Source: RMDB library OK3TST, as collected in RNAgym.
Chemical mapping of a 207-nucleotide RNA with 2A3 and DMS.
[RMDB]
RNA sequence: GGGAACGACUCGAGUAGAGUCGAAAAUGAAGGCGCGCUACGCCUACGUCCUGGGCAACGGCGCUACCUCGAUGGGUGCCAGCAAGACGCCCGUCGCGGCCGUCACCCCCGACGCCGGUUCGGGUUCGUAAUCCGCUGUGGUUACGCGCUACAAGCAAUCUACAUGACAAUUCGUUGUCAUGUAGAUAAAAGAAACAACAACAACAAC
Reactivity to 2A3 in 0.01 (KOAc 150mM, MgCl2 10mM, bicine 150mM(pH8.5), 24C), signal-to-noise 5, nucleotides 027 to 156: u210g030a090a050g040g000c010g010c000g010c050u040a020c050g010c000c000u000a030c030g030u020c010c040u030g000g020g000c080a140a100c120g020g000c010g010c030u060a060c000c010u020c000g010a010u020g000g000g040u030g050c090c080a080g080c120a140a040g060a050c010g000c010c000c000g010u010c010g000c020g000g020c080c030g030u040c040a130c010c030c000c010c020g010a010c010g000c020c010g010g000u050u090c020g010g020g000u050u050c010g020u030a010a030u020c010c030g040c220u200g040u120g100g010u030u030a010c020g010c010g020c000u060a090c040a110a020g030c020a040
Reactivity to DMS in 0.01 (KOAc 150mM, MgCl2 10mM, bicine 150mM(pH8.5), 24C), signal-to-noise 3, nucleotides 027 to 156: u010g030a110a060g020g040c080g000c030g030c040u000a090c070g020c030c020u000a050c060g040u000c030c030u000g020g040g010c040a090a110c070g010g010c010g000c040u000a030c040c010u000c030g010a040u000g010g020g030u010g020c000c020a280g020c270a160a170g020a040c020g010c000c050c030g030u000c050g010c080g050g030c040c040g010u000c050a180c020c050c010c050c020g000a040c040g000c030c040g040g030u000u000c040g010g000g010u000u000c020g000u000a030a060u000c020c030g010c080u020g040u000g030g010u000u010a050c000g030c030g030c030u000a130c070a100a120g010c090a180
Reactivities are given for positions 27 through 156. The RNA was probed in 150 mM KOAc, 10 mM MgCl2 and 150 mM bicine (pH 8.5) at 24 C.